[RMDB]
RNA sequence: GGGAACGACUCGAGUAGAGUCGAAAACACGAAGCUUGCCAUGGUUUCCAGGCGUGAUGAAAUUGGCGAGCUGAUCGCGCCGCCUGAAGACGAUUACGAUUAUGAUGCCAAGCCGGUUGCAGCCGCAGCAUUUAUCCGUAUUCGUACGGAUAAAUGCAAAAGAAACAACAACAACAAC
Reactivity to DMS in 0.01 (KOAc 150mM, MgCl2 10mM, bicine 150mM(pH8.5), 24C), signal-to-noise 5, nucleotides 027 to 126: c060a110c120g010a090a060g010c010u000u000g000c060c010a050u000g010g010u000u010u000c010c040a130g010g000c070g010u000g010a080u010g000a040a070a110u010u010g010g000c010g000a040g020c040u000g000a060u000c050g030c070g020c070c020g000c010c010u010g000a060a070g000a040c040g000a100u000u010a100c120g000a100u010u020a080u000g010a060u000g000c060c030a050a090g010c040c010g000g000u010u010g020c070a100g010c010c030g010c130a120
Reactivity to 2A3 in 0.01 (KOAc 150mM, MgCl2 10mM, bicine 150mM(pH8.5), 24C), signal-to-noise 4, nucleotides 027 to 126: c050a000c030g050a040a010g010c010u030u030g020c020c010a080u090g140g000u020u080u050c030c000a020g060g020c040g090u130g050a140u080g040a040a090a090u090u050g040g010c020g010a010g000c060u050g020a070u030c030g000c000g000c030c000g010c010c000u020g040a060a030g040a020c060g050a060u080u140a040c020g010a000u020u050a110u300g080a020u060g010c030c000a040a030g010c030c040g030g020u070u080g010c020a020g010c010c010g020c020a030